RNA sequence: GGGAACGACUCGAGUAGAGUCGAAAAGAUAUGGAGACGGAUGCUGCUUUCCGACGAAGUCGGAAACGACAGAGGAAAGAACUACAGCUGAUGUCUCCUAAGUCAAAGCACAACUUCGGUUGUGCAACAUCAUACUGCCCUUCGGGGCAGUAUGAUGAAAAGAAACAACAACAACAAC
Reactivity to 2A3 in 0.01 (KOAc 150mM, MgCl2 10mM, bicine 150mM(pH8.5), 24C), signal-to-noise 1, nucleotides 027 to 126: g050a030u060a030u160g000g000a000g000a020c000g000g030a000u020g010c000u020g000c000u020u000u000c070c020g120a260c120g050a290a020g020u000c000g030g060a000a170a000c010g010a000c000a000g130a060g010g000a020a000a020g010a030a040c130u230a090c170a010g000c000u020g020a000u010g020u020c000u030c000c000u000a050a000g000u000c030a090a040a090g000c000a000c000a010a010c020u070u130c300g180g000u000u000g000u020g000c010a000a000
Reactivity to DMS in 0.01 (KOAc 150mM, MgCl2 10mM, bicine 150mM(pH8.5), 24C), signal-to-noise 2, nucleotides 027 to 126: g000a060u010a300u000g000g000a060g000a040c030g000g000a080u000g000c010u000g000c010u020u000u000c010c000g010a170c290g020a050a230g010u000c030g010g000a130a050a130c000g020a000c000a040g000a200g000g000a010a010a030g000a050a000c090u020a300c070a020g000c000u010g000a300u030g020u010c000u010c000c000u000a000a090g050u000c000a100a050a020g010c000a000c000a020a000c000u000u010c200g030g000u000u000g020u020g020c000a050a040
The data come from the RNA Mapping Database (RMDB), library TTRDEL. This 177-nucleotide RNA was probed chemically with 2A3 and DMS. The 2A3 profile rests on 1,747 reads. For DMS the reverse transcriptase was MarathonRT. The reactions ran in a buffer of 150 mM KOAc, 10 mM MgCl2 and 150 mM bicine (pH 8.5), at 24 C. Reactivities are given for positions 27 through 126.